The record gives the reactivity of an RNA of 177 nucleotides to DMS and 2A3. Conditions: 150 mM KOAc, 10 mM MgCl2 and 150 mM bicine (pH 8.5), 24 C. It was measured as part of the RMDB libraries RFM100 and RFMREP. Reactivities are given for positions 27 through 126.
[RMDB]
RNA sequence: GGGAACGACUCGAGUAGAGUCGAAAAGGAACUGCAGAACCUAGAACUAGAAAGUUACUCAGGAAGAGACCAGAAGGGUGAAAGUUUAAGGUAGCUCAGUCGACAAUAGAGUAAACUUAACCACCGAAGAUCAUAUUCUCUUCGGAGAAUAUGAUCUAAAAGAAACAACAACAACAAC
Reactivity to DMS in 0.01 (KOAc 150mM, MgCl2 10mM, bicine 150mM(pH8.5), 24C), signal-to-noise 6, nucleotides 027 to 126: g010g020a140a050c050u020g010c070a070g010a060a100c040c030u000a120g000a100a060c050u000a100g030a100a080a070g010u010u010a050c030u010c060a020g010g020a130a140g000a090g010a130c050c040a090g000a070a090g010g000g040u010g000a080a080a080g010u060u000u020a010a030g000g000u000a200g000c010u010c010a110g020u010c180g030a130c210a040a090u020a080g000a020g010u000a020a080a210c020u010u000a020a020c150c040a040c050c040g000a080
Reactivity to 2A3 in 0.01 (KOAc 150mM, MgCl2 10mM, bicine 150mM(pH8.5), 24C), signal-to-noise 7, nucleotides 027 to 126: g040g010a050a010c000u030g000c060a010g020a050a030c000c010u050a030g030a060a030c030u040a030g150a130a260a000g030u030u050a100c010u020c050a000g020g020a040a030g060a010g020a060c020c020a040g060a110a060g100g000g000u040g040a190a090a030g020u040u040u050a020a000g020g020u020a010g000c000u000c010a070g100u130c090g090a060c050a080a110u150a140g030a000g020u050a050a230a010c010u020u020a020a000c020c030a000c000c020g020a040